[RMDB]
RNA sequence: GGGAACGACUCGAGUAGAGUCGAAAAUAAGACCUUUGGAAAAGCACAGUAUUUGGGCGAGAGUGUCCCAUUUUUCCAGGUACCGUCUGUCACGGCUUCCCUUGGCUAGGGAAGGGAAAUCCCCCAACCCCCUAUGCUUCCCGGGUGAGGCGAUGCCUAUCGGAGUGAAUUUCGAUUCACUCCGAUAAAAAGAAACAACAACAACAAC
Reactivity to 2A3 in 0.01 (KOAc 150mM, MgCl2 10mM, bicine 150mM(pH8.5), 24C), signal-to-noise 3, nucleotides 027 to 156: u170a050a030g050a040c020c020u050u100u190g010g020a030a030a030a020g030c060a050c030a140g170u180a200u110u140u080g010g010g000c080g050a110g030a040g160u100g070u230c000c010c030a050u030u030u010u010u020c000c010a000g000g020u010a090c010c040g040u030c050u090g110u100c040a040c090g020g010c000u010u010c000c000c010u030u040g050g000c010u020a040g020g000g020a000a070g010g000g030a040a210a130u110c000c010c010c000c000a010a040c000c010c000c010c000u000a020u110g010c010u040u050c000c030c040g100g000g010u100g020a010g000g010c010g020a060u060g020c000c000
Reactivity to DMS in 0.01 (KOAc 150mM, MgCl2 10mM, bicine 150mM(pH8.5), 24C), signal-to-noise 2, nucleotides 027 to 156: u000a060a100g000a110c000c020u000u010u010g030g020a040a010a040a070g030c070a080c070a110g000u000a080u000u000u000g000g040g000c050g010a200g010a170g020u000g010u000c020c020c010a160u000u000u000u000u000c020c020a060g010g040u010a050c020c030g020u000c020u000g020u010c110a110c020g020g040c040u000u000c020c000c000u000u000g010g020c080u000a200g000g050g050a100a110g020g010g000a040a110a130u000c000c000c010c020c090a040a260c010c020c020c000c010u000a090u000g000c030u000u000c010c020c020g000g030g020u000g020a040g040g040c000g030a090u010g000c010c050